[RMDB]
RNA sequence: GGGAACGACUCGAGUAGAGUCGAAAAGAUAUGGAAGUUCAUGUACUCCCCACCGUUGGCACUCCGACGAAGCUUCUCGGAAACGAGAAGCAGAGGAGUGCAACGAGGUACAUGAACUUCCUAAGUCCUCAAAUCAAAGGUUCGCCUUUGAUUUGAGAAAAGAAACAACAACAACAAC
Reactivity to 2A3 in 0.01 (KOAc 150mM, MgCl2 10mM, bicine 150mM(pH8.5), 24C), signal-to-noise 2, nucleotides 027 to 126: g040a050u160a090u290g000g000a000a000g000u000u000c000a010u010g000u020a010c030u120c050c030c010c000a050c010c010g030u040u070g300g050c020a030c020u010c010c010g300a300c060g010a270a000g000c000u010u000c000u010c000g030g010a150a090a040c010g000a000g020a010a010g000c000a000g000a000g000g000a010g000u000g010c010a000a000c010g000a020g030g030u000a000c000a000u000g000a010a000c000u000u040c000c010u000a060a000g080u030c000
Reactivity to DMS in 0.01 (KOAc 150mM, MgCl2 10mM, bicine 150mM(pH8.5), 24C), signal-to-noise 3, nucleotides 027 to 126: g000a100u010a300u000g010g020a010a040g040u000u010c010a000u010g010u010a010c000u020c030c070c010c060a300c130c000g000u000u000g010g010c000a010c000u000c020c010g000a250c300g000a090a090g000c000u000u000c000u020c000g010g010a080a100a190c040g010a010g010a000a010g030c000a020g010a090g000g010a020g050u010g000c000a010a000c010g000a100g020g000u000a000c000a000u000g000a010a000c010u000u000c000c000u000a040a070g000u000c040